[RMDB]
RNA sequence: GGGAACGACUCGAGUAGAGUCGAAAAAUGUGCGGCAAAGAAACAUUGUUUAUGCAAGGGCACUUCGCAAUGUGUGCUCAAACAUUGCUUAUUCAAACACGCUUCACAAUGUGCGACAAAGAAACAUAAAACGUUUAGUACUUCGGUACUAAACGAACGAUUAGUGAUAGUUCGCUAUCACUAAUCGAAAAGAAACAACAACAACAAC
Reactivity to DMS in 0.01 (KOAc 150mM, MgCl2 10mM, bicine 150mM(pH8.5), 24C), signal-to-noise 5, nucleotides 027 to 156: a070u000g010u000g030c030g040g070c080a060a110a100g020a120a030a050c040a070u000u000g020u010u000u010a060u000g020c070a100a300g000g010g030c020a040c020u000u000c130g030c120a130a080u000g020u000g030u000g000c030u000c060a060a100a030c030a040u000u000g010c010u010u010a120u000u000c030a100a110a090c030a080c050g020c050u000u000c080a050c070a060a090u000g020u000g000c010g020a180c060a070a070a160g010a080a110a040c060a070u000a030a070a090a140c010g020u000u000u000a010g010u000a000c010u000u000c260g070g010u000a010c010u000a000a010a000c010g010a010a040